Source: RMDB library OK3TST, as collected in RNAgym.
An RNA of 207 nucleotides, treated with 2A3 and DMS and read out base by base.
As a SHAPE reagent, 2A3 marks flexible, mostly unpaired nucleotides at the ribose 2'-OH.
For DMS, 2,796 sequencing reads were counted.
The reactions ran in a buffer of 150 mM KOAc, 10 mM MgCl2 and 150 mM bicine (pH 8.5), at 24 C.

RNA sequence: GGGAACGACUCGAGUAGAGUCGAAAAACUCUGCGGUCCGUAUGAAACGGUUGAUAAGGUGCGUUUGUCUCAAUUUCUGCUUGGGAAAGAGGCGGAAACUUUAGGCUUCUAGGAGAUACCGGACGAGUCGGCGAAGGAAGUGACCAAAAUCCGUUGACUGCUGAUUAUUAUUCGUAAUAAUCAGCAGAAAAGAAACAACAACAACAAC
Reactivity to 2A3 in 0.01 (KOAc 150mM, MgCl2 10mM, bicine 150mM(pH8.5), 24C), signal-to-noise 5, nucleotides 027 to 156: a000c030u010c010u040g020c040g040g050u000c030c000g040u040a080u150g130a070a080a030c030g010g030u050u040g050a090u070a150a050g030g000u050g030c060g050u030u070u090g070u010c000u000c030a070a120u010u050u010c020u050g040c030u060u090g070g010g040a100a090a050g050a040g010g010c010g010g020a030a030a040c040u060u050u090a030g030g010c000u050u020c060u140a060g020g040a080g020a040u070a080c040c050g010g000a020c000g010a020g020u040c010g030g020c050g000a050a010g030g020a040a040g050u060g090a050c000c030a020a000a020a120u070c030c050g000u030u040g050a060
Reactivity to DMS in 0.01 (KOAc 150mM, MgCl2 10mM, bicine 150mM(pH8.5), 24C), signal-to-noise 1, nucleotides 027 to 156: a020c010u000c010u000g020c020g020g030u000c000c030g030u010a090u020g020a100a070a120c050g000g030u000u000g020a090u000a050a090g020g030u020g020c030g040u000u000u000g000u000c030u000c070a060a090u000u000u000c020u010g010c090u000u000g040g020g000a130a060a200g020a070g000g000c060g020g010a020a060a020c060u000u000u010a010g010g030c020u000u000c030u000a140g020g020a170g000a130u000a030c010c010g000g000a090c020g000a090g030u000c050g000g000c070g030a060a130g000g000a030a090g030u020g000a100c030c070a030a030a040a150u020c020c030g000u000u000g000a220
Values are in units of 0.01, from 0 to 300, in steps of 10.